[RMDB]
RNA sequence: GGGAACGACUCGAGUAGAGUCGAAAAACUAAUCCAAAGCAAGUAUAUGAGAACAGGUUUUUAACUAUUUUUAGGCAGAUAAAAAAUAGUAUUUGACAGUCUAACACUAACUGAACAAUAAGUGUUAAAAAGUCGUCUCUGUUCGCAGAGACGACAACAGCACAACUAUCUUCGGAUAGUUGUGCUGAAAAGAAACAACAACAACAAC
Reactivity to 2A3 in 0.01 (KOAc 150mM, MgCl2 10mM, bicine 150mM(pH8.5), 24C), signal-to-noise 2, nucleotides 027 to 156: a000c070u100a100a060u050c030c010a070a000a000g040c030a010a080g040u070a120u080a050u230g110a080g040a120a040c080a170g090g000u050u000u010u000u030a020a010c010u000a010u010u010u000u010u020a020g050g000c030a030g060a200u130a040a080a010a010a020a040u000a010g010u010a110u110u020u080g090a020c000a000g000u000c000u000a000a000c000a000c000u010a020a000c000u000g090a060a000c010a010a000u020a020a000g000u000g010u020u030a020a070a020a020a010g000u000c000g010u000c000u010c000u000g080u100u050c140g000c050a010g000a000g000a010c000g000a000c000a000a000

The record gives the reactivity of an RNA of 207 nucleotides to 2A3. The reactions ran in a buffer of 150 mM KOAc, 10 mM MgCl2 and 150 mM bicine (pH 8.5), at 24 C. For 2A3, 1,933 sequencing reads were counted.